[RMDB]
RNA sequence: GGGAACGACUCGAGUAGAGUCGAAAAGGUACCAAGUAAGUCGUUGGAGCAAGGUAUACGUACUAUAUCGCUAACGAAGCGUCUGGAAGUCCAAUCUAUAGCUGAAAUGAUAUGCUCUUUCCGCAGAAUUUACAUAAAAAUUCGUUUUUAUGUAAAUAAAAGAAACAACAACAACAAC
Reactivity to DMS in 0.01 (KOAc 150mM, MgCl2 10mM, bicine 150mM(pH8.5), 24C), signal-to-noise 9, nucleotides 027 to 126: g000g020u010a130c040c030a090a110g010u020a070a080g020u010c020g010u010u000g000g010a070g000c060a090a090g000g000u000a030u000a050c210g010u010a130c110u010a040u010a040u010c040g000c060u000a060a070c090g000a060a080g000c040g010u020c050u000g000g000a090a100g000u010c050c060a070a080u010c040u010a080u020a100g010c010u000g000a060a050a070u030g000a060u020a060u020g000c030u000c030u000u010u000c020c030g030c070a080g010a090
Reactivity to 2A3 in 0.01 (KOAc 150mM, MgCl2 10mM, bicine 150mM(pH8.5), 24C), signal-to-noise 4, nucleotides 027 to 126: g060g010u050a030c010c010a020a030g060u050a070a010g010u020c010g000u030u030g020g000a010g020c020a040a030g030g010u010a020u010a030c100g040u020a020c030u010a010u010a010u050c000g000c010u010a000a050c030g040a060a000g010c000g080u010c020u020g040g020a020a020g030u000c000c010a000a020u000c020u070a070u070a030g000c010u000g010a010a030a020u130g010a010u020a010u100g000c000u000c000u000u010u000c010c000g000c000a000g050a050